[RMDB]
RNA sequence: GGGAACGACUCGAGUAGAGUCGAAAACGGUAUUGGUCAAGGCUAUACCGACAGCGCACCUCCAAAAGGGCGCUUAAUCCCCGGCCAAGCGCCGAAAUAUGAAUAGACACCGCUGGGCUGGUAGGGCAAAACAUGGCGAUCUUCGGAUCGCCAUGAACAUCAGUACUUGGUUCGCCAAGUACUGAUGAAAAGAAACAACAACAACAAC
Reactivity to 2A3 in 0.01 (KOAc 150mM, MgCl2 10mM, bicine 150mM(pH8.5), 24C), signal-to-noise 2, nucleotides 027 to 156: c000g000g010u020a030u060u190g040g020u100c070a110a080g110g010c010u020a000u010a000c010c000g010a050c050a020g000c010g000c070a300c050c000u030c020c050a060a060a000a030g000g010g010c000g000c000u000u000a000a000u000c000c000c020c000g010g000c000c000a060a020g020c040g000c080c040g080a040a060a010u190a060u120g090a060a060u050a050g070a030c020a020c050c010g030c040u050g000g010g000c030u040g090g020u110a070g010g030g000c090a020a040a060a060c000a020u010g020g000c000g000a000u010c000u010u050c100g050g000a000u000c020g000c000c000a000u000g000a000a000
Reactivity to DMS in 0.01 (KOAc 150mM, MgCl2 10mM, bicine 150mM(pH8.5), 24C), signal-to-noise 2, nucleotides 027 to 156: c020g010g010u000a000u000u000g100g030u000c090a100a160g020g020c040u000a130u010a040c020c000g010a180c130a060g040c030g000c030a130c010c000u000c100c220a120a080a160a100g010g000g020c010g030c000u000u010a030a110u000c000c000c040c030g000g010c030c000a100a060g010c020g030c060c030g000a020a090a130u000a200u030g000a150a240u010a160g010a140c070a110c140c010g000c000u000g010g000g000c030u000g000g050u000a030g000g000g050c080a030a070a050a250c010a000u000g000g010c000g010a040u000c000u000u000c300g020g000a000u000c000g000c000c000a010u010g000a070a110

Notes:
The record gives the reactivity of an RNA of 207 nucleotides to 2A3 and DMS. The RNA was probed in 150 mM KOAc, 10 mM MgCl2 and 150 mM bicine (pH 8.5) at 24 C. For DMS the reverse transcriptase was MarathonRT. In probing experiments dimethyl sulfate is read out at A N1 and C N3, which are open when not base-paired. For 2A3 the reverse transcriptase was SuperScript II with manganese. The 2A3 profile rests on 1,643 reads.